[RMDB]
RNA sequence: GGGAACGACUCGAGUAGAGUCGAAAAAAAGGCUUAUCAAGAGAGGUGGAGGGACUUGCCCGAUGAAACCCGGCAGCCAGAAAUGGUGCCAACUCCUGCAGCGGAAACGUUGAAAGAUGAGCCGAAAGAACAUUUCUAUGUUCGCAUAGAAAUGUUCAAAAGAAACAACAACAACAAC
Reactivity to 2A3 in 0.01 (KOAc 150mM, MgCl2 10mM, bicine 150mM(pH8.5), 24C), signal-to-noise 2, nucleotides 027 to 126: a000a000a000g010g000c000u000u010a000u020c040a070a030g050a000g010a040g060g000u020g020g020a050g020g000g010a010c040u090u070g150c040c000c000g130a210u030g010a030a040a040c020c010c000g010g000c030a050g160c000c010a000g020a000a040a010u040g000g010u020g000c010c000a020a010c000u020c010c010u030g010c010a010g010c010g020g000a040a030a010c000g000u020u030g020a080a070a010g000a010u010g000a010g000c000c010g010a010a030a000
Reactivity to DMS in 0.01 (KOAc 150mM, MgCl2 10mM, bicine 150mM(pH8.5), 24C), signal-to-noise 2, nucleotides 027 to 126: a050a080a120g020g010c010u000u000a000u000c000a120a120g010a130g020a150g000g000u000g010g000a060g000g000g030a220c160u010u000g010c000c020c000g010a110u000g000a090a120a060c020c050c080g000g020c010a070g030c000c000a000g000a070a090a090u000g000g010u000g000c020c010a040a060c020u000c040c050u000g020c020a030g000c010g000g000a100a070a130c020g020u000u000g010a090a110a130g000a050u000g000a000g000c000c000g000a030a060a100
Chemical mapping of a 177-nucleotide RNA with 2A3 and DMS. Source: RMDB library 15KREP, as collected in RNAgym. The 2A3 profile rests on 4,471 reads.